[RMDB]
The data come from the RNA Mapping Database (RMDB), library M2RFPK. This 207-nucleotide RNA was probed chemically with 2A3. For 2A3, 557 sequencing reads were counted. The reactions ran in a buffer of 150 mM KOAc, 10 mM MgCl2 and 150 mM bicine (pH 8.5), at 24 C.
RNA sequence: GGGAACGACUCGAGUAGAGUCGAAAAGAAAGAAAGAAAGAAGCCGGCUCUGCUAGUUUCACGGCAACCACGUUGAAAUUACAACGAAAGAUGCUCGCACUCAACUUCAACGGCUUAACGAGUGCAAAAAAGAAGUAUCACUUCGGUGAUACUUCAACCAUACUACGUGCUUCGGCACGUAGUAUGGAAAAGAAACAACAACAACAAC
Reactivity to 2A3 in 0.01 (KOAc 150mM, MgCl2 10mM, bicine 150mM(pH8.5), 24C), signal-to-noise 1, nucleotides 027 to 156: g080a010a000a050g060a070a190a000g040a050a140a090g060a040a000g080c230c120g060g000c000u010c000u020g030c000u000a010g010u020u130u110c110a010c060g020g000c030a020a040c010c000a070c050g000u010u020g080a160a190a140u260u210a140c020a030a000c030g020a020a070a000g070a060u140g070c080u050c190g010c010a000c000u010c010a000a030c040u110u070c010a090a090c060g050g000c030u070u030a050a000c060g010a000g000u010g040c000a030a000a000a000a000a100g010a000a000g000u000a000u030c000a010c010u000u030c140g000g000u000g000a000u000a000c000u000u000c000a000a000